[RMDB]
RNA sequence: GGGAACGACUCGAGUAGAGUCGAAAAGGAUUGUCCUCCUCGAGUCUCUUGAGAUUCUUGUUGACCUUCCGGAGCUCCCUCUCGAGUUCCUCCUUUCUUCUUCUUCCAUCGAUCCACUUUCCGAGUGCAGCAGUGUAGUUCGCUACACUGAAAAGAAACAACAACAACAAC
Reactivity to DMS in 0.01 (KOAc 150mM, MgCl2 10mM, bicine 150mM(pH8.5), 24C), signal-to-noise 9, nucleotides 027 to 129: g020g020a080u030u050g010u030c030c030u000c070c010u030c020g000a010g010u010c000u020c060u050u040g040a070g010a060u010u010c050u020u010g000u010u010g010a070c030c040u000u010c020c040g000g040a090g020c100u010c030c020c000u010c010u000c010g000a080g030u000u040c070c020u010c020c020u020u010u000c010u040u000c010u020u010c030u030u020c020c040a050u020c070g030a090u030c010c010a080c060u010u020u000c010c030g030a080g030u000g010c080a130g020
Reactivity to 2A3 in 0.01 (KOAc 150mM, MgCl2 10mM, bicine 150mM(pH8.5), 24C), signal-to-noise 9, nucleotides 027 to 129: g050g020a060u060u100g050u060c010c010u020c010c020u010c020g030a020g030u010c010u010c000u090u170g110a090g010a110u080u030c020u050u090g050u050u070g040a050c010c000u030u020c020c000g010g000a020g010c020u030c030c020c000u020c010u010c020g030a020g010u050u040c010c000u010c000c000u030u050u020c000u030u000c000u050u010c000u030u010c030c000a080u040c030g080a080u020c020c010a060c030u040u050u010c030c020g040a050g060u060g020c040a050g030

An RNA of 170 nucleotides, treated with DMS and 2A3 and read out base by base. The data come from the RNA Mapping Database (RMDB), library 15KLIB. High DMS reactivity at an A or C suggests that its Watson-Crick edge is free.